Chemical mapping of a 177-nucleotide RNA with 2A3 and DMS. The 2A3 profile rests on 2,349 reads. The data come from the RNA Mapping Database (RMDB), library OK2TST.
RNA sequence: GGGAACGACUCGAGUAGAGUCGAAAAGAGAAAGGUUGCGAGAAUGUCCGCUUUGAGCCAUCGGAUUCUUCGAUGGUAACAAUAAGAUCGCUGCCGUACCCUGACGGACUCAGAUCAUCAAUGACGAUGUUAGUGGAAGUUUCGACUUCCACUAACAAAAAGAAACAACAACAACAAC
Reactivity to 2A3 in 0.01 (KOAc 150mM, MgCl2 10mM, bicine 150mM(pH8.5), 24C), signal-to-noise 2, nucleotides 027 to 126: g120a010g040a010a090a000g010g030u030u030g020c010g000a020g020a190a140u150g020u010c010c030g010c000u000u010u030g010a000g010c000c000a020u000c000g000g050a120u270u070c050u150u060c070g000a000u020g010g020u040a010a050c020a040a120u170a040a000g050a060u020c010g010c030u010g000c010c000g020u070a140c000c000c010u000g050a020c030g000g010a000c020u000c090a100g060a280u090c040a020u040c020a040a200u170g010a040c080g040a030
Reactivity to DMS in 0.01 (KOAc 150mM, MgCl2 10mM, bicine 150mM(pH8.5), 24C), signal-to-noise 4, nucleotides 027 to 126: g000a160g010a170a070a130g030g010u010u000g000c020g020a070g010a140a100u000g000u000c030c020g020c050u000u000u000g010a260g000c000c000a020u000c010g000g000a170u000u010c260u000u000c010g010a010u000g000g010u010a010a060c170a080a130u020a040a080g000a110u000c010g010c020u000g010c000c020g000u000a190c020c020c010u010g000a100c070g020g020a030c030u000c140a080g000a090u000c070a030u000c110a100a090u000g010a060c130g010a090